[RMDB]
RNA sequence: GGGAACGACUCGAGUAGAGUCGAAAAAUGUCCAGUCCCUCUCCCGUCCUGGUGAAGGGAGAUUCCGGAACGUUUAGCAUUUGAGGGACAAAGCCGCCCCCGGGCGCUCCCCUCGGAGAUGUUCCAGUCACAUCCUCGUUCGCGAGGAUGAAAAGAAACAACAACAACAAC
Reactivity to 2A3 in 0.01 (KOAc 150mM, MgCl2 10mM, bicine 150mM(pH8.5), 24C), signal-to-noise 8, nucleotides 027 to 129: a000u120g060u040c040c000a010g060u020c000c000c000u000c010u010c020c000c000g070u060c020c040u160g130g010u230g070a050a040g020g060g000a030g010a020u160u040c060c080g000g000a010a010c000g000u020u090u180a130g030c110a160u050u040u150g020a010g000g000g010a030c050a050a030a000g080c130c060g000c010c010c000c010c020g030g010g000c020g000c020u010c000c000c000c000u000c000g000g000a030g000a010u030g000u020u000c010c000a000g040u050c010a010
Reactivity to DMS in 0.01 (KOAc 150mM, MgCl2 10mM, bicine 150mM(pH8.5), 24C), signal-to-noise 9, nucleotides 027 to 129: a070u020g000u040c050c070a090g000u000c010c000c020u010c010u000c030c020c020g000u020c020c030u050g040g030u030g030a040a050g000g000g000a050g020a050u030u040c110c100g020g020a040a000c020g030u000u010u000a090g040c130a150u020u050u010g020a040g020g040g000a040c070a080a070a050g020c030c060g050c030c010c000c090c230g000g000g050c000g020c040u000c080c010c010c010u020c030g010g020a010g000a060u000g020u000u040c010c010a120g030u050c140a160
Overview:
The data come from the RNA Mapping Database (RMDB), library 15KLIB. The record gives the reactivity of an RNA of 170 nucleotides to 2A3 and DMS. The reactions ran in a buffer of 150 mM KOAc, 10 mM MgCl2 and 150 mM bicine (pH 8.5), at 24 C.